[RMDB]
RNA sequence: GGGAACGACUCGAGUAGAGUCGAAAACGCGAUGGAUACGUCCAUCGCGAAUCCGUCCAAGCCGCGGACGUUAAACUGUGGCACGGUUGUGCCUAGGUGCAACCCUGCUAUGCAUGGCGGCACCCCUGCCCAAGCUACCGUCUACGGACGGUAGCAACUGAAAAUGAGUCUUCGGACUCAUUUUCAGAAAAGAAACAACAACAACAAC
Reactivity to 2A3 in 0.01 (KOAc 150mM, MgCl2 10mM, bicine 150mM(pH8.5), 24C), signal-to-noise 2, nucleotides 027 to 156: c000g010c010g010a000u000g010g000a010u010a060c180g140u020c000c000a000u000c000g010c000g000a000a010u040c010c010g010u010c010c000a070a040g000c010c000g010c010g000g010a000c000g000u010u020a030a050a030c090u090g010u030g010g000c000a000c000g000g020u000u000g000u010g010c000c030u070a210g140g000u020g000c000a000a000c000c000c000u000g010c000u040a020u110g080c070a080u130g050g000c000g010g040c010a140c000c010c010c010u060g030c000c040c010a060a020g000c000u010a000c000c000g000u000c010u000a030c300g070g010a000c000g000g000u000a000g000c000a000a000